[RMDB]
Structure probing data (2A3 and DMS) for a 177-nucleotide construct. The reactions ran in a buffer of 150 mM KOAc, 10 mM MgCl2 and 150 mM bicine (pH 8.5), at 24 C. Values are in units of 0.01, from 0 to 300, in steps of 10. For DMS, 1,416 sequencing reads were counted.
RNA sequence: GGGAACGACUCGAGUAGAGUCGAAAAGACGUGGACAGUUCGUUGGUACCGUCGAUCCGGAUAGUCCUGCUGAGAGAGGAGGAUUAAUCACUGGUGACCGAAUCUUUGCUGUCAAUGGUCACUCGAACACGUCAGUCACGUUCGCGUGACUGACGUGAAAAGAAACAACAACAACAAC
Reactivity to 2A3 in 0.01 (KOAc 150mM, MgCl2 10mM, bicine 150mM(pH8.5), 24C), signal-to-noise 1, nucleotides 027 to 126: g000a000c020g000u090g010g010a000c000a010g000u130u220c080g070u210u110g020g080u050a020c000c000g030u010c010g000a000u030c000c000g010g000a000u010a000g040u000c020c030u000g180c060u080g030a090g020a070g010a050g260g020a010g020g010a030u000u030a130a120u030c030a060c110u100g070g050u020g000a000c000c050g060a090a080u000c030u110u240u270g060c000u000g000u040c000a030a100u110g030g050u000c010a000c010u040c010g070a070a040
Reactivity to DMS in 0.01 (KOAc 150mM, MgCl2 10mM, bicine 150mM(pH8.5), 24C), signal-to-noise 2, nucleotides 027 to 126: g000a010c050g060u000g020g010a060c000a060g000u000u030c230g000u000u010g000g020u010a170c090c060g000u000c040g010a100u000c000c000g000g010a080u000a050g010u000c020c020u010g020c000u010g020a250g000a130g010a060g010g000a020g040g010a030u000u010a070a080u000c060a110c130u000g020g020u000g000a050c010c000g000a130a100u000c040u000u000u000g000c040u000g010u000c030a090a120u000g010g000u000c000a040c010u000c140g040a060a100